Annotation:
Chemical mapping of a 177-nucleotide RNA with DMS and 2A3. The RNA was probed in 150 mM KOAc, 10 mM MgCl2 and 150 mM bicine (pH 8.5) at 24 C. High 2A3 reactivity points to a flexible backbone, as in loops and unpaired stretches.
RNA sequence: GGGAACGACUCGAGUAGAGUCGAAAAUUUAACGUCUUCUGGUUGCUUCUAACGCCUGAAAAGGCGGUGCAUUGAACCGUUUAGGUUUGCUAGGCGCCAGUUCUUACUCCACAUUUUUGAAAUAUAGCAAUGGCCAAACUUUCGAGUUUGGCCAUUGAAAAGAAACAACAACAACAAC
Reactivity to DMS in 0.01 (KOAc 150mM, MgCl2 10mM, bicine 150mM(pH8.5), 24C), signal-to-noise 2, nucleotides 027 to 126: u020u030u010a140a080c270g000u000c070u000u030c010u000g000g000u000u030g000c000u000u020c160u010a200a190c010g000c000c010u000g000a160a100a180a040g010g000c000g000g010u000g050c150a100u050u030g000a070a000c030c010g030u010u030u020a050g020g030u000u000u000g000c020u020a000g000g010c000g000c000c000a040g010u020u000c020u000u010a150c060u000c080c060a060c190a080u000u000u000u080u020g010a030a030a120u040a080u040a110g030
Reactivity to 2A3 in 0.01 (KOAc 150mM, MgCl2 10mM, bicine 150mM(pH8.5), 24C), signal-to-noise 2, nucleotides 027 to 126: u050u050u110a080a030c060g050u040c020u170u030c000u060g050g000u080u300g010c030u000u000c080u180a110a080c000g000c000c000u030g000a080a090a040a040g000g000c010g030g000u020g030c000a030u100u120g050a020a000c000c000g060u140u200u220a090g000g000u000u000u060g030c030u010a010g070g000c000g000c000c000a000g000u020u000c030u010u040a070c030u100c060c050a150c030a300u000u000u030u080u110g150a150a140a040u150a050u040a100g080